RNA sequence: GGGAACGACUCGAGUAGAGUCGAAAACCGUUCCACGCAGGACGCGAACAAGAUGAAGCCGUAGCAACUUCAGUUAGCCGCGCACGAACUGGCGCUCGAUCUCCGCCUAGCUAGAGUAGGUUUCCCCGUAAGAUACGUACUUCGGUACGUAUCUUACAAAAGAAACAACAACAACAAC
Reactivity to DMS in 0.01 (KOAc 150mM, MgCl2 10mM, bicine 150mM(pH8.5), 24C), signal-to-noise 3, nucleotides 027 to 126: c020c020g010u000u000c020c050a040c140g000c050a110g000g000a100c070g010c030g010a070a090c110a130a070g010a110u020g010a070a060g000c030c040g020u000a040g010c040a120a110c030u000u010c030a030g000u000u000a100g000c080c040g020c040g000c040a070c060g000a060a090c070u000g020g000c020g010c090u000c020g020a070u000c030u000c040c050g010c040c020u010a040g000c050u020a090g010a090g000u010a030g030g010u000u000u000c010c010c030c300
Reactivity to 2A3 in 0.01 (KOAc 150mM, MgCl2 10mM, bicine 150mM(pH8.5), 24C), signal-to-noise 4, nucleotides 027 to 126: c000c000g020u060u000c040c020a100c080g040c020a050g040g070a090c040g000c020g040a060a030c030a100a050g070a140u090g030a070a000g060c080c050g050u080a010g070c040a030a070c010u080u060c030a060g010u050u080a010g010c040c020g000c010g040c010a020c070g070a160a030c050u100g040g000c040g010c030u040c040g080a090u040c010u010c050c000g050c010c040u040a030g020c030u050a040g010a040g060u030a040g010g130u020u040u040c000c010c010c010